[RMDB]
RNA sequence: GGGAACGACUCGAGUAGAGUCGAAAAACUGGGUUCGCCCAGUAAAGGUCCUAAGUCUCCGACAUCGAUCGGUCCGUGAGCAACAGCCAUCGGAAACGAUGGACAUGCUCUCGGACCGGGAGUCGGAGAUAUGGAGCAACAGCUGCUUCGGCAGCAAGAUGUUUGCACCUUUCGAGGUGCAAACAUCAAAAGAAACAACAACAACAAC
Reactivity to 2A3 in 0.01 (KOAc 150mM, MgCl2 10mM, bicine 150mM(pH8.5), 24C), signal-to-noise 1, nucleotides 027 to 156: a000c040u020g000g000g040u100u030c300g100c000c000c040a000g010u020a090a000a000g160g020u000c020c000u020a030a070g060u000c000u000c000c010g060a060c050a300u150c040g150a180u090c020g050g020u060c000c000g000u010g000a000g000c020a010a090c010a100g010c070c000a000u000c010g080g000a110a050a030c000g000a000u000g000g000a020c010a070u010g000c000u000c000u000c000g000g000a000c000c000g000g010g000a000g010u000c000g000g000a000g000a000u000a000u010g000g010a020g030c010a020a130c010a080g010c000u020g020c000u070u070c210g150g040c000a020g000c020a020a060